Chemical mapping of a 177-nucleotide RNA with DMS. The RNA was probed in 150 mM KOAc, 10 mM MgCl2 and 150 mM bicine (pH 8.5) at 24 C. For DMS the reverse transcriptase was MarathonRT. Reactivities are rounded to 0.1 and cut off at 0 and 3.

RNA sequence: GGGAACGACUCGAGUAGAGUCGAAAAGAUAUGGAGCUGCAGACUUCCAUAUUCUUCCGAUAAGCUACUAUCGGAAACGAUAGCUAGCUUUUGACGGAAUUAGAUGGAAGUCUGCAGCUCCUAAGUCCUAUAUAUUCGUCUUCGGACGAAUAUAUAGAAAAGAAACAACAACAACAAC
Reactivity to DMS in 0.01 (KOAc 150mM, MgCl2 10mM, bicine 150mM(pH8.5), 24C), signal-to-noise 3, nucleotides 027 to 126: g010a110u000a230u010g000g010a020g010c000u000g010c000a010g010a020c000u000u010c010c000a020u000a060u000u000c020u000u000c000c000g020a240u010a030a020g000c000u000a050c000u010a000u000c000g020g000a120a110a190c000g000a000u010a000g000c300u000a010g010c000u000u000u000u000g010a230c100g010g000a030a010u000u000a000g010a030u000g000g010a020a010g000u000c000u000g000c000a000g010c000u000c000c000u000a000a070g000u000c030